Chemical mapping of a 177-nucleotide RNA with DMS. The reactions ran in a buffer of 150 mM KOAc, 10 mM MgCl2 and 150 mM bicine (pH 8.5), at 24 C.

[RMDB]
RNA sequence: GGGAACGACUCGAGUAGAGUCGAAAAUGCGCUGUCUGCGGGACACGGUGCUGCUGCUGCACGGCCUAUCGCAGAAGGACAAGCUCUUCAUGAUGCACUGCGUGGAGGUCCUGCAUCAGUUUGACCAUACCUCCACGCUGUUCGCAGCGUGGAGGUAAAAAGAAACAACAACAACAAC
Reactivity to DMS in 0.01 (KOAc 150mM, MgCl2 10mM, bicine 150mM(pH8.5), 24C), signal-to-noise 2, nucleotides 027 to 126: u000g000c020g020c030u010g010u010c050u000g030c020g000g000g000a110c230a080c030g000g050u000g010c050u000g020c030u000g010c110u000g010c040a020c240g010g000c010c000u000a150u000c030g040c010a020g000a080a080g020g020a140c180a160a090g000c010u000c000u000u010c140a080u020g000a080u000g010c030a200c070u000g000c010g040u000g010g020a060g000g000u000c050c160u000g000c010a040u000c020a090g000u000u010u000g000a170c100c010a260